[RMDB]
RNA sequence: GGGAACGACUCGAGUAGAGUCGAAAAUCAGCCUAUUCCUGGUCAGAAGAUCAUGACGGUUGAUUUGGCCGAAGAAAUCAUGAUUGGGCUGUACAAGAUCUUCUGCGAUGCAGGCCUGUGCCAGAACAUGCCGUAUUACAUCUCGACCUUGAAGGUGCAUAACAGUACUCUUCGGAGUACUGUUAUGAAAAGAAACAACAACAACAAC
Reactivity to DMS in 0.01 (KOAc 150mM, MgCl2 10mM, bicine 150mM(pH8.5), 24C), signal-to-noise 4, nucleotides 027 to 156: u010c040a100g030c010c000u000a140u000u010c000c020u000g020g020u000c020a110g030a110a130g000a050u010c030a080u010g010a060c080g010g030u010u000g000a150u000u000u000g010g010c000c030g020a110a110g020a120a110a110u010c060a090u010g010a140u010u010g010g020g000c010u000g010u000a100c050a060a080g010a070u010c050u000u010c030u000g020c070g030a130u000g020c020a090g020g000c020c060u010g020u000g030c020c150a110g000a090a090c030a090u000g020c020c020g010u000a060u010u000a080c050a080u000c000u000c050g000a020c020c010u000u000g000a050a070g040g040u010g000
Reactivity to 2A3 in 0.01 (KOAc 150mM, MgCl2 10mM, bicine 150mM(pH8.5), 24C), signal-to-noise 9, nucleotides 027 to 156: u080c010a010g030c010c000u080a180u060u050c000c010u010g040g000u040c040a100g040a180a040g010a150u030c040a090u200g060a020c010g000g020u020u020g050a160u070u030u070g020g000c010c030g040a100a050g090a090a130a070u210c140a100u170g080a140u120u200g020g020g000c010u010g010u030a030c050a070a050g020a130u070c020u190u040c020u190g080c070g090a110u060g010c010a020g030g140c000c010u090g040u170g010c000c020a020g020a060a040c070a100u110g020c000c010g030u040a050u080u170a060c040a030u000c010u020c010g030a030c010c020u010u040g060a050a020g020g020u050g010

An RNA of 207 nucleotides, treated with DMS and 2A3 and read out base by base. 2A3 is a SHAPE reagent: it acylates the 2'-hydroxyl of flexible nucleotides of all four kinds. Conditions: 150 mM KOAc, 10 mM MgCl2 and 150 mM bicine (pH 8.5), 24 C. It was measured as part of the RMDB library OK3TST. 2A3 adducts were read by reverse transcription with SuperScript II with manganese. The 2A3 profile rests on 10,179 reads.